[RMDB]
RNA sequence: GGGAACGACUCGAGUAGAGUCGAAAAAGGAGGUUGAAUCAACACGCGAUUCUGAUGUGAAUGCGGGAACUGUUGGAACAUUCACCAUUCCAAGAAUCAAAUCAAUCACUGAAAAGAUGCGUAUGCCGCCUUCCAGUAGAUUCGUCUACUGGAAGGCAAAAGAAACAACAACAACAAC
Reactivity to DMS in 0.01 (KOAc 150mM, MgCl2 10mM, bicine 150mM(pH8.5), 24C), signal-to-noise 3, nucleotides 027 to 126: a080g010g000a110g000g000u010u000g000a020a100u010c110a130a100c230a070c040g000c030g000a040u000u010c030u000g000a110u030g000u040g010a000a040u010g000c190g030g000g000a040a040c180u010g010u030u020g020g000a080a040c010a030u020u010c000a020c030c000a200u020u000c000c080a020a030g000a030a020u000c010a060a050a120u010c070a020a020u040c070a060c000u000g010a080a060a120a100g000a020u030g000c030g000u000a080u030g020c140c090
Reactivity to 2A3 in 0.01 (KOAc 150mM, MgCl2 10mM, bicine 150mM(pH8.5), 24C), signal-to-noise 6, nucleotides 027 to 126: a000g090g020a020g020g020u060u030g020a020a060u100c050a060a100c010a030c110g050c050g030a030u050u000c010u030g170a190u140g060u100g030a030a010u090g060c130g060g030g010a040a030c070u060g080u110u100g110g040a090a040c030a020u000u030c020a050c020c030a020u040u000c020c000a010a020g010a040a030u080c050a040a020a110u040c020a030a020u060c010a030c110u130g060a110a070a010a030g070a070u110g020c020g020u080a050u170g080c050c050